An RNA of 177 nucleotides, treated with DMS and 2A3 and read out base by base.
The reactions ran in a buffer of 150 mM KOAc, 10 mM MgCl2 and 150 mM bicine (pH 8.5), at 24 C.
For DMS, 1,372 sequencing reads were counted.
RNA sequence: GGGAACGACUCGAGUAGAGUCGAAAAUUGGGGUUUCGAGGAGUUCAGCCACCGUAAGUCGGUGUUGACCAAACCAACCCGACCCGACCUGUCCAGCUUUAUCUACCCGCCGUACACCGAGCGCGCCAUACUUCCUGGCGUUCGCGCCAGGAAGUAUAAAAGAAACAACAACAACAAC
Reactivity to DMS in 0.01 (KOAc 150mM, MgCl2 10mM, bicine 150mM(pH8.5), 24C), signal-to-noise 1, nucleotides 027 to 126: u030u000g020g000g000g030u000u040u040c020g000a150g030g000a280g010u000u000c030a160g000c050c060a000c040c000g000u060a060a240g000u020c000g000g060u000g040u010u000g010a110c000c110a040a080a110c060c140a040a040c060c000c020g000a060c000c010c010g010a140c120c010u000g000u020c010c050a100g000c050u020u000u000a060u110c060u000a090c030c000c000g100c010c000g000u030a120c020a050c040c050g000a040g010c060g000c030g000c000c100
Reactivity to 2A3 in 0.01 (KOAc 150mM, MgCl2 10mM, bicine 150mM(pH8.5), 24C), signal-to-noise 2, nucleotides 027 to 126: u100u060g070g000g000g010u050u120u100c070g040a100g020g030a140g060u060u020c050a070g030c050c060a000c000c000g020u070a090a060g100u120c020g010g040u070g010u040u000g000a060c000c070a050a020a050c020c000a000a000c000c000c010g000a000c020c010c000g080a080c000c010u030g030u040c010c000a010g030c090u120u130u140a170u100c010u050a040c020c010c000g000c020c010g060u040a050c020a010c020c010g020a060g060c000g000c000g010c020c020